RNA sequence: GGGAACGACUCGAGUAGAGUCGAAAACAGGACAACCAGGAGCAUUUGGAGACAUACAAUCCAGAACAGUCUCAAGCUCAGAUCUGUAUGCCAAUACCAACCUAGUGCUGCAGAGACCCAAAGCAGGCGAGUCUUGAAGAUUCGUCUUCAAGACUCGAAAAGAAACAACAACAACAAC
Reactivity to DMS in 0.01 (KOAc 150mM, MgCl2 10mM, bicine 150mM(pH8.5), 24C), signal-to-noise 1, nucleotides 027 to 126: c010a040g000g000a010c060a040a090c050c090a150g010g010a030g000c060a040u000u010u000g000g010a080g010a030c050a120u020a130c140a080a060u010c070c150a120g010a020a050c120a080g000u000c090u030c050a030a060g030c000u010c020a090g030a030u000c070u010g000u000a020u010g040c060c030a030a120u000a090c030c030a030a060c060c010u000a050g020u000g020c010u000g020c000a040g000a040g000a190c020c020c000a070a050a190g000c170a030g010g010
Reactivity to 2A3 in 0.01 (KOAc 150mM, MgCl2 10mM, bicine 150mM(pH8.5), 24C), signal-to-noise 2, nucleotides 027 to 126: c020a060g000g140a020c020a060a050c100c050a030g100g000a010g070c040a060u080u020u210g220g000a020g050a010c020a000u220a040c020a100a100u050c020c020a000g030a170a030c040a020g060u020c020u000c070a000a010g000c000u020c010a000g020a090u000c000u040g010u040a050u220g000c020c020a040a030u110a160c000c030a070a070c000c010u020a040g020u010g120c010u030g000c020a000g030a020g050a100c010c000c050a020a000a110g120c080a020g100g010